[RMDB]
RNA sequence: GGGAACGACUCGAGUAGAGUCGAAAAAGAGCCCAGGUAAUUUGCUGAGCCUGAUGGGUGUCAGGGUCAGUCCAAGUGAAAGCAAAGAGAGGCUGGGAUGAAGGGUGCAAAGGAAUAGUAAAGAAAGCAUGUUUGAGAUCCAGAACAGAAUAAUGAAACGGAGUCAUAUAUUCGUAUAUGACUCCGUAAAAGAAACAACAACAACAAC
Reactivity to DMS in 0.01 (KOAc 150mM, MgCl2 10mM, bicine 150mM(pH8.5), 24C), signal-to-noise 1, nucleotides 027 to 156: a170g000a190g010c010c000c030a150g040g000u030a010a060u000u000u000g020c010u030g020a120g010c000c010u000g000a060u010g000g040g040u010g010u000c030a140g020g010g040u000c020a020g010u000c140c040a040a130g050u000g010a070a070a150g000c030a050a050a170g030a100g020a130g030g010c020u000g030g010g000a120u010g000a060a060g000g000g000u010g040c120a030a090a070g020g010a060a030u000a100g000u000a040a060a050g000a040a080a030g000c050a030u000g020u010u010u030g020a110g030a030u000c020c040a220g040a100a160c020a070g020a040a060u040a040a040u040g020a150a060
Reactivity to 2A3 in 0.01 (KOAc 150mM, MgCl2 10mM, bicine 150mM(pH8.5), 24C), signal-to-noise 1, nucleotides 027 to 156: a010g080a050g010c030c030c000a030g000g090u150a130a110u060u060u160g010c000u030g030a050g000c000c000u000g020a030u060g080g120g000u260g020u040c010a010g000g000g030u070c040a000g010u010c030c020a070a000g010u030g100a120a060a000g020c050a090a090a030g050a010g010a010g040g000c030u030g030g030g000a010u040g020a000a070g040g010g000u050g010c030a070a040a000g000g000a000a050u040a010g030u050a010a100a000g030a000a020a000g000c010a000u050g070u020u040u070g070a080g010a020u030c050c010a020g010a120a000c010a050g030a040a090u190a050a050u100g050a150a100